The record gives the reactivity of an RNA of 177 nucleotides to 2A3 and DMS. For 2A3 the reverse transcriptase was SuperScript II with manganese. Values cover nucleotides 27 to 126. The data come from the RNA Mapping Database (RMDB), libraries RFM100 and RFMREP.

[RMDB]
RNA sequence: GGGAACGACUCGAGUAGAGUCGAAAAGCGAAGCGGGAGGGGAACCGACCGUGGACCUUCUGGGAGCGAGAAUGCUGGCAUGAGUAGCGAGAGACGAGAGGGUAACUCGUCCGCCGUAAACCCGAGGGCCUUAUAGUAAAUUCGUUUACUAUAAGGCAAAAGAAACAACAACAACAAC
Reactivity to 2A3 in 0.01 (KOAc 150mM, MgCl2 10mM, bicine 150mM(pH8.5), 24C), signal-to-noise 9, nucleotides 027 to 126: g040c010g010a020a000g010c010g000g010g020a030g010g010g000g050a030a100c010c010g020a020c000c000g000u030g000g010a030c010c000u050u050c030u050g020g030g010a060g010c040g010a060g070a180a070u160g020c030u030g050g030c050a090u130g040a050g090u080a020g020c030g010a050g010a010g000a090c020g000a010g010a040g050g160g030u070a060a050c000u000c010g020u000c010c020g000c010c000g040u070a050a050a060c000c000c000g020a080g030g070
Reactivity to DMS in 0.01 (KOAc 150mM, MgCl2 10mM, bicine 150mM(pH8.5), 24C), signal-to-noise 9, nucleotides 027 to 126: g010c050g000a260a190g010c020g000g000g010a300g010g000g010g080a110a100c020c010g000a190c030c020g010u010g010g000a260c300c010u000u000c040u010g010g000g010a100g010c030g010a070g010a100a070u010g010c020u010g000g000c050a060u010g000a090g010u010a070g010c020g000a130g010a160g010a030c020g000a030g000a140g000g010g010u030a080a080c020u000c010g000u000c010c020g000c170c010g010u010a050a080a100c010c000c010g000a110g010g010